About this RNA:
This 177-nucleotide RNA was probed chemically with DMS and 2A3.
RNA sequence: GGGAACGACUCGAGUAGAGUCGAAAAGAUAUGGACAAUACUUCUUGAUGACCUAUAGCCUCUUCGGAAACGAAUGCUAUAGCAAGAGAAGGUUGUCCUAAGUCAAAGUCGAACUUCGGUUCGACAAGUAAACGUGAGACUUCGGUCUCACGUUUACAAAAGAAACAACAACAACAAC
Reactivity to DMS in 0.01 (KOAc 150mM, MgCl2 10mM, bicine 150mM(pH8.5), 24C), signal-to-noise 1, nucleotides 027 to 126: g000a040u010a300u000g000g000a020c000a000a040u010a170c000u000u000c010u000u010g000a120u000g000a100c300c000u000a000u000a000g000c000c130u000c040u000u020c020g030g000a060a100a120c000g000a060a010u010g000c010u010a000u000a000g000c020a040a060g010a010g000a050a020g010g000u000u010g000u000c000c010u010a010a110g010u000c020a090a060a140g000u000c000g000a000a000c000u000u030c140g020g000u000u000c000g000a000c000a040a070
Reactivity to 2A3 in 0.01 (KOAc 150mM, MgCl2 10mM, bicine 150mM(pH8.5), 24C), signal-to-noise 2, nucleotides 027 to 126: g040a010u070a050u120g030g000a000c000a050a070u210a300c050u020u050c000u220u080g090a300u140g050a120c020c020u050a010u000a000g000c000c040u010c040u020u000c010g030g000a030a080a080c020g020a000a000u300g000c010u000a020u010a010g000c030a300a000g010a000g000a040a000g000g000u000u020g000u000c000c000u020a050a010g040u040c030a200a030a020g030u030c000g000a000a020c010u070u080c280g080g000u000u000c020g000a010c010a010a000
Description
2A3 adducts were read by reverse transcription with SuperScript II with manganese. The reactions ran in a buffer of 150 mM KOAc, 10 mM MgCl2 and 150 mM bicine (pH 8.5), at 24 C. The 2A3 profile rests on 2,216 reads.